[RMDB]
RNA sequence: GGGAACGACUCGAGUAGAGUCGAAAAGCGCUUGUCGCUACCACGGAACGACGACGCCGCCGCCCAUGCGGUCGAAACUAGCUGUGAGACAGUCAAUCCCGAUGCCAGGAUCUGGCUCUUAAGGCUGUGCAUGUAGUCGUUUCGACGACUACAUGCAAAAAGAAACAACAACAACAAC
Reactivity to 2A3 in 0.01 (KOAc 150mM, MgCl2 10mM, bicine 150mM(pH8.5), 24C), signal-to-noise 2, nucleotides 027 to 126: g000c010g000c080u110u190g130u270c010g010c050u040a090c050c020a060c080g040g000a140a040c060g080a010c000g020a000c010g040c030c000g010c010c000g050c020c010c000a020u110g000c000g030g000u070c030g050a070a000a070c060u070a030g000c000u020g020u030g060a040g040a030c030a020g010u050c030a010a060u030c020c010c000g050a100u210g040c030c020a010g050g000a120u110c040u040g030g000c010u000c000u030u090a060a000g000g000c010u020g050
Reactivity to DMS in 0.01 (KOAc 150mM, MgCl2 10mM, bicine 150mM(pH8.5), 24C), signal-to-noise 3, nucleotides 027 to 126: g010c040g010c070u000u000g030u000c000g050c020u000a210c060c040a090c110g030g020a050a080c050g010a060c010g030a160c170g010c030c030g000c020c050g030c010c070c040a110u010g010c030g020g000u010c060g020a060a120a070c070u010a050g010c030u000g000u020g000a080g020a080c040a040g010u000c050a090a070u000c010c010c040g000a060u000g010c050c050a080g000g010a090u020c040u000g000g010c020u010c020u000u010a130a110g000g010c010u000g000
This 177-nucleotide RNA was probed chemically with 2A3 and DMS.
For DMS, 1,778 sequencing reads were counted.
DMS adducts were read by reverse transcription with MarathonRT.